Structure probing data (DMS and 2A3) for a 177-nucleotide construct. Source: RMDB library OK2TST, as collected in RNAgym. The RNA was probed in 150 mM KOAc, 10 mM MgCl2 and 150 mM bicine (pH 8.5) at 24 C.
RNA sequence: GGGAACGACUCGAGUAGAGUCGAAAACGAUCGCCCGGAGGACGGACGCCUCCGUAGACGUGAACCUCGUGAGCAAGGUGGUACGGAAGGCCGACGGGCAGUUCGUGAGGAUCGCUCCUCACAGCUAACUACUGGUGUGCUUCGGCACACCAGUAGUAAAAGAAACAACAACAACAAC
Reactivity to DMS in 0.01 (KOAc 150mM, MgCl2 10mM, bicine 150mM(pH8.5), 24C), signal-to-noise 3, nucleotides 027 to 126: c060g030a070u010c090g010c010c010c010g010g000a210g020g020a100c090g010g020a200c190g020c030c010u000c000c000g020u000a030g030a090c140g010u010g030a180a040c040c000u010c070g020u000g000a190g000c120a120a020g000g020u010g010g000u000a030c030g010g000a070a070g020g020c000c030g020a240c030g010g000g000c030a090g030u010u000c110g030u000g000a020g010g010a060u010c220g000c300u000c000c000u000c020a090c050a050g020c090u000a100
Reactivity to 2A3 in 0.01 (KOAc 150mM, MgCl2 10mM, bicine 150mM(pH8.5), 24C), signal-to-noise 2, nucleotides 027 to 126: c020g040a090u130c070g000c000c000c000g030g010a040g090g060a030c100g080g050a050c060g040c010c000u000c020c020g000u010a050g030a100c100g070u110g080a020a020c000c010u030c050g160u160g180a100g020c070a090a010g000g020u020g000g060u050a010c020g010g000a050a090g050g020c000c020g000a020c020g000g000g000c000a020g040u080u070c070g030u020g010a000g000g000a010u110c060g000c100u020c020c000u020c030a030c000a010g020c010u050a010